[RMDB]
RNA sequence: GGGAACGACUCGAGUAGAGUCGAAAAUGCCGCAAGCACGAGUUCGCGCACGGUUUUUUCGAGGUCGGCAGUGCUGCGGCGGAUCUGUGCGCUCUCGAUGCCGCUGAUCUCCGCAUAGGCGCGUGCAGCCGUCAUUAGCGUUCGCGCUAAUGACGGCAAAAGAAACAACAACAACAAC
Reactivity to 2A3 in 0.01 (KOAc 150mM, MgCl2 10mM, bicine 150mM(pH8.5), 24C), signal-to-noise 1, nucleotides 027 to 126: u090g030c000c000g000c060a050a080g000c000a000c000g130a110g050u180u140c000g000c000g000c030a020c050g090g040u010u000u000u000u140u300c110g070a070g000g060u080c020g020g000c090a060g010u010g030c000u000g010c010g010g000c000g000g000a010u000c010u040g030u040g030c060g000c040u060c000u030c120g090a070u140g010c010c000g000c030u030g040a040u030c030u020c010c000g000c050a040u080a070g030g120c020g000c010g000u010g060c020a030
Reactivity to DMS in 0.01 (KOAc 150mM, MgCl2 10mM, bicine 150mM(pH8.5), 24C), signal-to-noise 1, nucleotides 027 to 126: u000g020c000c000g020c040a060a040g010c010a040c020g010a140g020u000u000c050g110c080g020c020a160c020g010g000u000u000u000u010u010u000c140g000a150g000g000u000c040g000g000c010a100g000u010g000c010u000g000c000g010g000c040g000g000a020u000c030u010g020u050g010c150g060c000u000c100u000c170g020a100u000g020c000c040g030c030u000g000a060u000c020u000c010c050g000c140a050u000a130g030g000c050g010c010g040u000g000c060a200